[RMDB]
The record gives the reactivity of an RNA of 177 nucleotides to DMS and 2A3. Reactivities are given for positions 27 through 126. For DMS, 1,786 sequencing reads were counted. 2A3 adducts were read by reverse transcription with SuperScript II with manganese. The reactions ran in a buffer of 150 mM KOAc, 10 mM MgCl2 and 150 mM bicine (pH 8.5), at 24 C. Values are in units of 0.01, from 0 to 300, in steps of 10.

RNA sequence: GGGAACGACUCGAGUAGAGUCGAAAAAGUGGGAGGGGACCCAAUAAACCCAAAAAUGCAUGAGUUUUCAGGGUCUUUCAUCAAAUUCAUGGCUAGAGCCCUUGAUGAAGAGAUCAGCCAAAGAAGAUACUCCACACUGUUUCGACAGUGUGGAGUAAAAAGAAACAACAACAACAAC
Reactivity to DMS in 0.01 (KOAc 150mM, MgCl2 10mM, bicine 150mM(pH8.5), 24C), signal-to-noise 1, nucleotides 027 to 126: a080g070u020g000g000g010a110g000g000g000g000a090c030c000c030a020a090u040a010a150a120c030c000c000a030a010a040a100a100u020g010c100a090u030g010a050g030u000u000u000u000c070a170g000g020g040u000c000u000u010u000c010a000u010c020a020a050a120u020u020c090a150u060g000g000c060u010a060g000a050g010c020c010c170u000u020g000a000u000g030a030a030g000a040g000a000u020c010a050g000c060c010a070a170a130g010a110a040g010a120
Reactivity to 2A3 in 0.01 (KOAc 150mM, MgCl2 10mM, bicine 150mM(pH8.5), 24C), signal-to-noise 2, nucleotides 027 to 126: a100g100u010g000g000g000a180g030g000g000g120a020c000c000c000a040a040u160a070a060a070c140c070c000a220a240a000a100a000u110g000c010a050u120g100a000g080u000u000u000u270c220a180g100g000g000u020c000u010u010u060c000a000u020c030a060a090a000u300u130c050a210u170g030g000c000u120a050g080a040g170c000c000c040u020u030g000a040u000g020a090a040g040a000g000a130u000c000a040g040c000c080a160a110a030g120a010a030g000a030